[RMDB]
Background: The record gives the reactivity of an RNA of 177 nucleotides to 2A3 and DMS. The reactions ran in a buffer of 150 mM KOAc, 10 mM MgCl2 and 150 mM bicine (pH 8.5), at 24 C. For 2A3 the reverse transcriptase was SuperScript II with manganese. For DMS, 2,223 sequencing reads were counted. Values are in units of 0.01, from 0 to 300, in steps of 10. The 2A3 profile rests on 3,196 reads.
RNA sequence: GGGAACGACUCGAGUAGAGUCGAAAAGCUGCGUGCUCCAUGAGCAAAGUCAAUCCUAAAGUAGUUACAGAAAAGAGAAUCCGCAAAUACGAAACUGUAAUAGAAACAUUCGCAACCAUAGGAUUUGGUGUCUGAUUUAAUUCGUUAAAUCAGACACAAAAGAAACAACAACAACAAC
Reactivity to 2A3 in 0.01 (KOAc 150mM, MgCl2 10mM, bicine 150mM(pH8.5), 24C), signal-to-noise 3, nucleotides 027 to 126: g000c010u030g010c020g140u030g000c010u020c060c020a170u250g020a030g030c010a020a080a010g040u070c030a020a070u050c000c000u060a110a050a010g060u060a050g000u050u020a040c010a010g120a070a130a050a000g110a020g020a050a040u050c030c050g030c110a050a120a060u160a080c020g040a070a040a020c040u020g000u030a000a040u060a110g160a050a120a000c030a070u070u090c040g000c060a030a030c010c020a050u060a100g050g000a050u050u030u210g070
Reactivity to DMS in 0.01 (KOAc 150mM, MgCl2 10mM, bicine 150mM(pH8.5), 24C), signal-to-noise 3, nucleotides 027 to 126: g020c060u000g010c080g010u010g010c000u000c030c160a150u000g020a060g030c030a040a070a080g000u000c050a080a140u000c010c010u010a060a080a100g010u010a070g010u000u000a010c010a040g010a080a080a120a120g000a180g000a050a060u000c020c060g020c080a050a030a070u020a080c030g000a100a080a080c020u000g000u000a030a050u010a090g000a100a100a090c080a100u010u010c050g020c050a040a080c060c050a110u010a100g000g020a080u000u000u020g030